RNA sequence: GGGAACGACUCGAGUAGAGUCGAAAAGGCCAUCCAGACCGAGGCCAUGGCGCUGAACCCGGGGCUGGGCCCGCUGCUGGUCCUGCCCCUGCACCCCGGCGUGGGCCGCGCGGCGCAGAAGGUGUACGUGCUUACUUUUUUUCGAAAAAGUAAGCACAAAAGAAACAACAACAACAAC
Reactivity to DMS in 0.01 (KOAc 150mM, MgCl2 10mM, bicine 150mM(pH8.5), 24C), signal-to-noise 3, nucleotides 027 to 126: g020g010c000c000a060u010c040c050a090g010a130c080c090g000a150g010g030c120c060a040u010g010g010c050g000c010u000g010a110a120c060c020c100g030g000g020g010c010u000g010g000g000c000c000c060g020c140u010g020c170u000g030g000u000c000c000u000g020c000c010c020c000u000g030c030a060c050c030c010c020g020g010c040g040u010g010g020g000c000c030g000c140g000c090g030g000c030g030c130a050g000a060a100g000g020u010g020u000a090c180
Reactivity to 2A3 in 0.01 (KOAc 150mM, MgCl2 10mM, bicine 150mM(pH8.5), 24C), signal-to-noise 2, nucleotides 027 to 126: g010g000c000c000a050u060c060c010a060g180a210c050c060g070a100g020g010c010c020a030u040g100g000c110g010c080u030g020a060a060c030c020c000g000g000g000g000c020u030g020g000g000c030c010c010g220c170u230g010c100u060g020g010u030c010c000u000g010c010c020c000c030u000g000c020a020c000c040c010c000g060g000c040g040u210g030g130g030c020c010g020c010g020c070g020g000c030g020c010a020g030a100a010g030g000u070g030u080a080c120